[RMDB]
The record gives the reactivity of an RNA of 170 nucleotides to DMS and 2A3. For DMS the reverse transcriptase was MarathonRT. It was measured as part of the RMDB library 15KLIB. For DMS, 39,966 sequencing reads were counted.
RNA sequence: GGGAACGACUCGAGUAGAGUCGAAAAGGGAUUGUGAUUUUAAUAAACCACUCAUUGAGUGGCCACUUACUGAGUAUGAUUUUACUGAUUAUAAGGUACAACUCUUUGAGAAGUACUUUAAAUAUUGCGCCACAAAGGUUCGCCUUUGUGAAAAGAAACAACAACAACAAC
Reactivity to DMS in 0.01 (KOAc 150mM, MgCl2 10mM, bicine 150mM(pH8.5), 24C), signal-to-noise 8, nucleotides 027 to 129: g030g010g020a130u020u020g000u000g020a110u000u040u040u040a000a110u060a080a110a190c000c030a060c030u030c020a190u060u070g020a030g010u020g000g000c050c020a020c100u020u060a110c000u040g000a040g000u000a000u010g010a100u000u000u000u000a020c020u000g040a060u000u040a170u040a020a000g000g050u000a040c020a030a210c030u000c000u050u040u050g010a000g000a060a300g010u040a010c030u000u000u000a000a080a060u010a050u050u040g020c120g010c120
Reactivity to 2A3 in 0.01 (KOAc 150mM, MgCl2 10mM, bicine 150mM(pH8.5), 24C), signal-to-noise 9, nucleotides 027 to 129: g050g010g010a100u180u170g030u010g040a080u020u070u100u230a180a180u180a080a060a030c010c000a010c000u010c030a300u110u300g010a000g000u010g000g000c000c000a050c000u210u300a040c020u020g000a000g050u050a050u090g070a090u050u070u050u080a030c030u020g030a030u050u120a080u040a190a020g000g000u010a010c000a030a040c030u010c000u050u120u220g030a010g010a040a010g000u000a010c000u010u020u020a020a050a020u150a050u080u120g080c090g020c020